Notes:
Structure probing data (2A3 and DMS) for a 207-nucleotide construct. For 2A3 the reverse transcriptase was SuperScript II with manganese. The RNA was probed in 150 mM KOAc, 10 mM MgCl2 and 150 mM bicine (pH 8.5) at 24 C. For DMS the reverse transcriptase was MarathonRT.

[RMDB]
RNA sequence: GGGAACGACUCGAGUAGAGUCGAAAACAUUGGUUGUUCGCAACCAAUGAAAAAAGCGUACUACUGCGAGGGGGAGCUAGUAUCCCAAAUAGGAUACCUAGCUUUGAUCCUACCCACCGCAGUAUCGCAAAAACACACUUCCUUCGGGAAGUGUGAAGUAGUAAUGCAACUUCGGUUGCAUUACUACAAAAGAAACAACAACAACAAC
Reactivity to 2A3 in 0.01 (KOAc 150mM, MgCl2 10mM, bicine 150mM(pH8.5), 24C), signal-to-noise 2, nucleotides 027 to 156: c000a010u000u000g000g010u010u010g050u070u060c240g030c130a010a000c000c010a000a000u040g000a120a010a000a000a010a030g040c040g030u070a100c070u000a000c010u000g000c000g010a100g030g000g020g030g000a000g000c000u000a000g010u000a000u010c010c010c010a130a260a200u280a070g010g000a000u020a000c010c060u010a040g010c000u030u030u130g040a030u100c000c010u080a170c020c010c030a060c070c000g000c000a000g000u010a010u090c010g000c010a000a000a030a110a000c000a000c000a000c000u000u010c000c000u010u070c220g050g000g010a000a000g000u000g000u000g000a020a000
Reactivity to DMS in 0.01 (KOAc 150mM, MgCl2 10mM, bicine 150mM(pH8.5), 24C), signal-to-noise 1, nucleotides 027 to 156: c040a020u010u000g000g000u020u010g010u000u010c290g050c000a000a000c000c010a020a010u000g020a000a060a070a100a120a150g040c010g000u010a130c130u000a040c080u000g000c030g000a090g040g030g000g000g020a040g010c030u010a000g030u000a030u000c000c010c020a040a120a160u010a010g010g000a020u000a010c110c040u010a000g020c020u010u010u020g010a110u000c070c020u010a150c050c000c000a090c030c000g050c030a040g010u010a040u000c060g030c010a080a080a060a120a240c000a030c010a030c000u000u000c000c000u000u000c300g090g010g010a010a020g040u000g000u010g010a000a100